[RMDB]
RNA sequence: GGGAACGACUCGAGUAGAGUCGAAAAUACAACUGUUAGUGUUACUGUAUCCAGUAACAUGGUUGAAACUGUUGUGGGUCAACUUGAGCAAACUAAUAUGCAUAGUCCUGAUGUUAUAGUAGGUGACGAAUCGUGCUGUUCGCAGCACGAAAAAGAAACAACAACAACAAC
Reactivity to 2A3 in 0.01 (KOAc 150mM, MgCl2 10mM, bicine 150mM(pH8.5), 24C), signal-to-noise 2, nucleotides 027 to 129: u180a000c020a000a010c030u150g040u160u030a040g000u000g000u000u000a000c020u000g060u090a250u120c220c000a000g000u000a000a000c010a000u030g000g140u020u120g000a100a010a010c050u010g010u000u000g000u000g000g000g020u030c060a050a030c000u000u030g000a010g120c010a110a030a030c000u130a080a080u070a000u300g000c020a000u000a060g020u000c000c000u080g040a090u150g030u000u000a000u000a000g010u070a000g000g010u020g010a000c000g000a010a040
Reactivity to DMS in 0.01 (KOAc 150mM, MgCl2 10mM, bicine 150mM(pH8.5), 24C), signal-to-noise 2, nucleotides 027 to 129: u090a120c120a030a050c100u050g000u010u040a140g000u030g020u000u000a030c010u000g020u000a230u020c300c030a040g030u020a070a000c000a020u020g000g000u000u000g030a080a080a080c120u020g020u000u000g000u000g000g000g000u000c070a120a070c040u000u030g000a130g040c120a050a050a070c060u000a000a000u030a000u050g040c090a070u030a070g000u020c070c000u040g020a060u000g010u000u020a010u010a010g000u040a040g000g000u000g040a030c110g010a070a110
About this RNA: Chemical mapping of a 170-nucleotide RNA with 2A3 and DMS. Conditions: 150 mM KOAc, 10 mM MgCl2 and 150 mM bicine (pH 8.5), 24 C. Reactivities are given for positions 27 through 129.